[RMDB]
RNA sequence: GGGAACGACUCGAGUAGAGUCGAAAAAUACAGUACGAAAGUACAAAGAAGCAAUCAAACCGAGCAGUGAAAUGAUGGCUUCAGUCCAAAAUGGGCAAACACUGCAGACGGAGCCUAAGGCAAAUAAUUCCUAUAGAGCAUUCGUGCUCUAUAGGAAAAAAGAAACAACAACAACAAC
Reactivity to DMS in 0.01 (KOAc 150mM, MgCl2 10mM, bicine 150mM(pH8.5), 24C), signal-to-noise 2, nucleotides 027 to 126: a090u020a070c100a140g020u000a020c010g000a140a060a090g000u020a010c010a070a060a120g000a060a010g020c030a100a080u000c030a070a110a080c050c050g000a090g030c010a010g000u000g010a070a050a080u010g010a040u010g000g020c000u000u000c040a130g000u000c000c030a030a070a070a120u010g000g020g000c050a040a050a060c040a030c030u000g000c000a090g000a190c040g010g000a080g000c040c020u010a020a070g000g020c040a070a040a040u000a080a100